RNA sequence: GGGAACGACUCGAGUAGAGUCGAAAAAUUUCGCUUAAGCACAAGUCUUGCCGGUUCAACGGGAAAGGGUACAAUUCCGCACGGAAAAAUCGGUUCUGGCCCGCGUCGCAAGCAAUACAGGCAAUCCGACACUGAUGAAUUUCGAUUCAUCAGUGUCAAAAGAAACAACAACAACAAC
Reactivity to 2A3 in 0.01 (KOAc 150mM, MgCl2 10mM, bicine 150mM(pH8.5), 24C), signal-to-noise 3, nucleotides 027 to 126: a000u070u100u060c060g000c040u090u130a090a040g020c030a070c020a150a070g030u030c020u040u040g040c040c020g040g060u110u080c070a120a010c030g020g010g080a070a030a030g070g010g030u120a080c030a020a090u060u000c010c010g060c080a090c140g050g030a010a040a000a010a060u100c050g030g000u060u000c010u040g050g000c000c010c020g000c020g080u070c030g000c020a020a000g030c000a000a050u060a080c040a040g080g000c010a010a070u040c050c060
Reactivity to DMS in 0.01 (KOAc 150mM, MgCl2 10mM, bicine 150mM(pH8.5), 24C), signal-to-noise 4, nucleotides 027 to 126: a140u000u010u000c050g000c030u000u000a090a140g020c130a080c090a060a110g000u000c010u000u000g000c070c050g030g000u000u010c100a120a110c020g010g000g000a030a060a130g020g020g000u010a060c050a080a140u000u000c010c020g020c260a050c240g000g020a020a040a030a130a090u000c100g010g000u000u010c020u000g020g000c020c020c000g010c070g000u010c050g000c030a060a050g010c050a070a070u000a050c150a080g010g000c040a080a090u010c060c050

Record summary:
Structure probing data (2A3 and DMS) for a 177-nucleotide construct. For DMS, 2,886 sequencing reads were counted. Conditions: 150 mM KOAc, 10 mM MgCl2 and 150 mM bicine (pH 8.5), 24 C. For 2A3 the reverse transcriptase was SuperScript II with manganese.